[RMDB]
RNA sequence: GGGAACGACUCGAGUAGAGUCGAAAAACGAUUAGAGAGACCGUUGUAGUUCUAGCAGUAAACGAUGCCGAUACCGUGGUGCGGAUAGGCGACGCGGAAGAAAAAUCGAGUAGGGCCCUGGGGAGAGCUUAACUAUGACAUUCGUGUCAUAGUUAAGAAAAGAAACAACAACAACAAC
Reactivity to 2A3 in 0.01 (KOAc 150mM, MgCl2 10mM, bicine 150mM(pH8.5), 24C), signal-to-noise 9, nucleotides 027 to 126: a000c050g020a070u120u190a040g040a010g010a000g030a130c010c030g030u040u050g070u060a080g010u030u040c040u060a040g010c040a040g050u170a030a080a050c040g060a050u100g030c010c010g030a030u050a110c010c020g020u050g040g080u140g080c020g020g020a070u090a080g060g020c010g010a010c010g010c020g040g030a090a020g090a050a160a010a000a010u060c030g010a020g030u050a040g020g030g010c020c010c000u030g010g000g010g010a080g000a000g010
Reactivity to DMS in 0.01 (KOAc 150mM, MgCl2 10mM, bicine 150mM(pH8.5), 24C), signal-to-noise 8, nucleotides 027 to 126: a080c050g000a110u020u020a110g010a100g000a120g010a070c060c060g020u010u010g020u010a090g020u000u010c030u010a090g000c070a060g020u010a060a070a090c080g010a080u010g010c050c010g010a090u030a060c060c030g010u000g000g010u020g010c040g010g000a080u010a080g000g010c010g010a040c050g010c060g010g010a060a070g020a030a050a040a080a060u010c040g000a080g000u010a070g020g000g010c020c020c020u000g000g000g000g000a080g000a070g010